This 177-nucleotide RNA was probed chemically with DMS and 2A3. For 2A3 the reverse transcriptase was SuperScript II with manganese. The reactions ran in a buffer of 150 mM KOAc, 10 mM MgCl2 and 150 mM bicine (pH 8.5), at 24 C. DMS adducts were read by reverse transcription with MarathonRT. High DMS reactivity at an A or C suggests that its Watson-Crick edge is free.

[RMDB]
RNA sequence: GGGAACGACUCGAGUAGAGUCGAAAAGAAAACAAGUACCGAGAACAUUGUUUUCGCUGCUUGGCGUUGCCGUUUUGUGUUGCAGUUGGUUGGGUAACGCCGCAAAUACCAACAGCAAAGAGAGAUAAAUCAGGGUAUGCUUCGGCAUACCCUGAUUAAAAGAAACAACAACAACAAC
Reactivity to DMS in 0.01 (KOAc 150mM, MgCl2 10mM, bicine 150mM(pH8.5), 24C), signal-to-noise 1, nucleotides 027 to 126: g000a010a010a250a150c090a000a040g000u020a000c140c020g000a110g000a150a010c000a080u000u080g020u000u000u000u000c010g040c270u020g000c000u000u000g000g050c060g020u030u000g000c030c040g000u010u040u000u150g000u050g010u080u000g020c070a080g010u000u040g070g010u070u010g030g000g070u040a010a070c130g000c000c010g030c110a030a060a000u080a040c020c030a000a000c020a020g000c000a000a080a090g010a090g000a080g020a040u000a070
Reactivity to 2A3 in 0.01 (KOAc 150mM, MgCl2 10mM, bicine 150mM(pH8.5), 24C), signal-to-noise 1, nucleotides 027 to 126: g030a000a030a040a000c020a000a000g010u010a100c040c040g000a030g000a000a000c080a300u120u170g010u090u020u000u000c000g080c080u030g000c030u000u030g000g010c000g000u000u000g000c000c010g030u040u010u190u170g300u030g060u050u050g000c000a030g000u000u020g040g020u100u260g120g010g000u060a030a000c000g000c000c060g000c010a020a160a000u220a030c000c000a000a000c000a000g000c010a000a090a000g250a110g000a000g000a000u100a190